[RMDB]
RNA sequence: GGGAACGACUCGAGUAGAGUCGAAAAGGCCAUCGCACAGGUGUUGAACCACGCCAUCUGCCUGGAUAUCCCGCUGCACCAGCACCUGGAUCCCAUCUCGCAUCCCGAAAACAGCCUCGACACGGGAAUUUAUCACCAUGGCCGCUCGGUCCGCCUGCAUCUAAGACACCUUCGGGUGUCUUAGAUGAAAAGAAACAACAACAACAAC
Reactivity to DMS in 0.01 (KOAc 150mM, MgCl2 10mM, bicine 150mM(pH8.5), 24C), signal-to-noise 1, nucleotides 027 to 156: g060g020c050c030a080u000c110g030c100a110c040a030g030g010u030g020u000u010g010a100a130c050c060a020c050g020c060c020a070u000c020u000g040c030c060u020g030g000a110u000a080u000c040c000c030g070c080u000g050c020a130c040c030a080g000c060a020c030c020u010g000g020a120u010c050c010c030a140u000c060u010c030g020c000a170u000c010c000c050g000a060a090a090a110c060a120g050c000c020u000c040g000a100c080a070c060g020g000g000a070a110u000u000u000a130u000c010a090c010c020a150u000g010g010c000c040g070c030u000c030g020g020u000c010c030g040c050c020u010g000
Reactivity to 2A3 in 0.01 (KOAc 150mM, MgCl2 10mM, bicine 150mM(pH8.5), 24C), signal-to-noise 2, nucleotides 027 to 156: g050g000c000c030a060u050c090g000c030a040c020a060g030g000u020g030u040u090g070a060a020c020c010a030c030g050c010c060a060u040c060u150g030c030c030u020g000g000a020u050a150u180c010c000c000g050c030u040g050c040a030c080c020a010g010c000a010c000c020u020g000g000a000u020c000c000c010a000u050c030u040c110g030c020a040u110c010c000c000g060a040a000a030a180c030a010g050c020c020u030c040g070a010c020a040c040g010g040g010a010a020u060u100u110a180u110c040a030c080c010a020u090g000g010c000c000g010c010u070c040g040g020u030c000c020g000c050c000u000g030